[RMDB]
RNA sequence: GGGAACGACUCGAGUAGAGUCGAAAAGCAACUUAGGAUUUUAGGCUCCCCGUGCGUGUCUCGAACCAUGCCUGGCCAAACCCACGGGGGCUGGCGGUCCCCGUGCGGUCAAAAUCAAACCGCUGGAAAAACAGUUCUAGCUUCGGCUAGAACUGAACUGUUAACGAGGGUUCGCCCUCGUUAACAGAAAAGAAACAACAACAACAAC
Reactivity to 2A3 in 0.01 (KOAc 150mM, MgCl2 10mM, bicine 150mM(pH8.5), 24C), signal-to-noise 1, nucleotides 027 to 156: g030c040a020a130c120u230u280a110g050g030a200u150u110u050u130a090g000g000c010u050c000c020c000c040g030u040g050c050g040u110g020u050c020u040c080g050a020a040c050c010a020u000g020c020c010u000g050g010c000c030a090a070a030c000c000c000a000c010g000g010g010g010g000c000u000g000g000c010g000g000u000c000c010c020c000g010u000g010c030g020g000u020c020a050a040a000a090u110c000a000a160a110c000c000g000c010u020g040g030a090a060a000a000a000c020a000g000u000u000c000u000a020g000c010u070u030c290g090g020c000u000a000g000a000a000c000u000g000a000a040
Record summary
This 207-nucleotide RNA was probed chemically with 2A3. The RNA was probed in 150 mM KOAc, 10 mM MgCl2 and 150 mM bicine (pH 8.5) at 24 C. High 2A3 reactivity points to a flexible backbone, as in loops and unpaired stretches.